[RMDB]
RNA sequence: GGGAACGACUCGAGUAGAGUCGAAAAGAAAGCAUAAUGGAUAAAAUCACAAUUUGGGGUCAGACAAUCAACCUGUUUCUCGGCACUUGCCGCGUGGCAAUCUUUGACUUCGACGGAACACUGAGUGACGGCUCAAAACGUCUUCACCUGCUACCGACAUUGACUUUGCAUUCGUGCAAAGUCAAUGAAAAGAAACAACAACAACAAC
Reactivity to DMS in 0.01 (KOAc 150mM, MgCl2 10mM, bicine 150mM(pH8.5), 24C), signal-to-noise 1, nucleotides 027 to 156: g010a130a050a130g040c050a040u000a050a150u000g000g000a160u000a050a050a070a130u000c030a070c070a020a150u000u000u000g070g030g030g060u080c030a070g020a130c060a080a110u000c070a070a120c020c040u010g000u000u020u000c030u000c030g040g010c080a140c120u000u000g020c000c030g050c070g000u000g020g000c020a040a040u000c080u000u000u000g010a040c050u010u000c030g000a090c060g040g010a060a020c040a030c040u000g020a170g010u010g020a040c030g020g000c040u010c120a040a060a040a010c110g020u000c010u000u000c020a030c000c020u000g000c000u000a180c040c000g050a270
Reactivity to 2A3 in 0.01 (KOAc 150mM, MgCl2 10mM, bicine 150mM(pH8.5), 24C), signal-to-noise 3, nucleotides 027 to 156: g030a020a030a000g010c030a040u070a080a050u140g040g020a030u070a100a100a020a050u090c020a020c020a040a060u100u050u100g010g000g000g020u030c020a020g060a130c050a030a130u190c010a030a060c020c040u020g020u000u100u020c020u010c000g020g010c040a030c180u070u220g020c000c010g020c030g070u060g000g020c000a010a080u060c100u100u070u060g080a130c000u030u020c030g110a110c010g010g010a030a030c040a020c100u020g010a030g060u010g030a040c020g020g000c000u000c050a050a160a030a030c040g000u000c000u020u040c000a000c000c010u020g020c020u050a030c010c010g030a020

An RNA of 207 nucleotides, treated with DMS and 2A3 and read out base by base. Values are in units of 0.01, from 0 to 300, in steps of 10. Source: RMDB library OK3TST, as collected in RNAgym. Conditions: 150 mM KOAc, 10 mM MgCl2 and 150 mM bicine (pH 8.5), 24 C.